[RMDB]
The record gives the reactivity of an RNA of 177 nucleotides to DMS and 2A3. The RNA was probed in 150 mM KOAc, 10 mM MgCl2 and 150 mM bicine (pH 8.5) at 24 C. The data come from the RNA Mapping Database (RMDB), library OK2TRN.
RNA sequence: GGGAACGACUCGAGUAGAGUCGAAAAGGCAUGACAGUGGGCUUGAAUCCGUACCGCGGCCCGGCAUAGGCACCGGUGCCCUUGGCGGCCGAGGCCAUUCCCGGCAUCAUCCCGGUAACUGGGCCGGAUAGUGUGAGCUCUUCGGAGCUCACACUAUAAAAGAAACAACAACAACAAC
Reactivity to DMS in 0.01 (KOAc 150mM, MgCl2 10mM, bicine 150mM(pH8.5), 24C), signal-to-noise 3, nucleotides 027 to 126: g010g000c030a080u000g000a090c080a050g030u000g000g010g010c050u000u010g000a110a110u000c040c040g010u000a130c120c060g020c130g010g000c010c010c020g010g000c050a140u010a100g010g030c070a080c070c040g010g000u000g020c010c000c080u000u000g010g020c050g010g020c110c040g010a080g000g000c020c040a150u000u000c060c010c020g000g000c140a110u000c100a120u010c140c010c000g000g000u010a060a110c080u000g010g000g010c010c000g000g000
Reactivity to 2A3 in 0.01 (KOAc 150mM, MgCl2 10mM, bicine 150mM(pH8.5), 24C), signal-to-noise 1, nucleotides 027 to 126: g020g040c080a050u090g020a090c040a040g070u100g070g060g000c000u050u040g050a040a060u080c000c010g020u060a090c020c020g000c030g040g020c040c030c000g020g020c080a110u090a120g050g000c040a020c040c000g040g020u070g010c000c000c080u100u190g070g010c040g020g000c000c010g010a030g020g060c020c000a000u040u060c000c010c000g030g050c010a120u080c010a040u000c010c020c000g010g010u020a040a030c070u060g010g100g030c020c000g010g010
2A3 adducts were read by reverse transcription with SuperScript II with manganese.